RNA sequence: GGGAACGACUCGAGUAGAGUCGAAAAGAUAUGGACUGCUCUACCACAGAGAGGACAUUCGGAAACGAAUGCCUCGACGAAGUGGUAGAGGCAGUCCUAAGUCAAAAGAGUCUCCUUCGGGAGACUCCCCAUACAGAUACUUCGGUAUCUGUAUGGGAAAAGAAACAACAACAACAAC
Reactivity to DMS in 0.01 (KOAc 150mM, MgCl2 10mM, bicine 150mM(pH8.5), 24C), signal-to-noise 6, nucleotides 027 to 126: g010a070u000a300u000g000g000a010c000u000g010c010u000c000u000a010c010c000a010c000a060g000a230g000a020g000g000a130c010a010u000u000c000g000g000a120a150a220c000g010a020a000u000g000c020c000u010c010g000a120c260g000a120a110g000u000g000g010u000a010g000a030g020g030c000a000g010u000c000c000u000a010a090g010u010c040a080a070a120a180g010a030g010u000c000u000c000c000u000u010c230g020g000g000a020g010a000c000u000c000
Reactivity to 2A3 in 0.01 (KOAc 150mM, MgCl2 10mM, bicine 150mM(pH8.5), 24C), signal-to-noise 4, nucleotides 027 to 126: g020a010u070a070u220g000g000a000c000u000g000c010u020c010u010a000c000c010a020c020a020g040a000g000a030g030g020a190c000a000u000u010c000g020g040a070a060a050c010g000a010a010u010g050c000c000u030c010g200a240c020g030a160a050g020u000g030g000u000a000g010a010g000g000c000a000g010u000c000c000u000a010a000g030u000c020a000a030a060a190g010a010g000u000c010u000c010c000u040u120c300g140g000g000a010g000a000c000u000c000